[RMDB]
RNA sequence: GGGAACGACUCGAGUAGAGUCGAAAACACUCUUCACACUUGUAUAAAUUCAAUCAGUGAGGAAACUGUGAACUCAGAUGGAUUGACACCAUCUGUUACUCAAGGCACAGCACGUUCACAUCAGUUCUACCAGUGGGCACUUCGGUGCCCACUGGUAAAAAGAAACAACAACAACAAC
Reactivity to 2A3 in 0.01 (KOAc 150mM, MgCl2 10mM, bicine 150mM(pH8.5), 24C), signal-to-noise 1, nucleotides 027 to 126: c050a040c080u000c000u000u020c030a000c000a010c030u000u040g010u000a090u100a240a300a300u200u060c080a050a100u090c040a060g020u000g000a000g000g000a000a090a090c050u010g020u000g000a040a020c000u000c010a000g000a010u000g000g010a040u030u250g110a070c070a020c030c010a000u000c000u000g000u000u160a020c060u130c180a000a000g190g030c040a000c000a020g100c050a010c080g060u020u070c060a130c020a120u030c080a060g200u090u010c000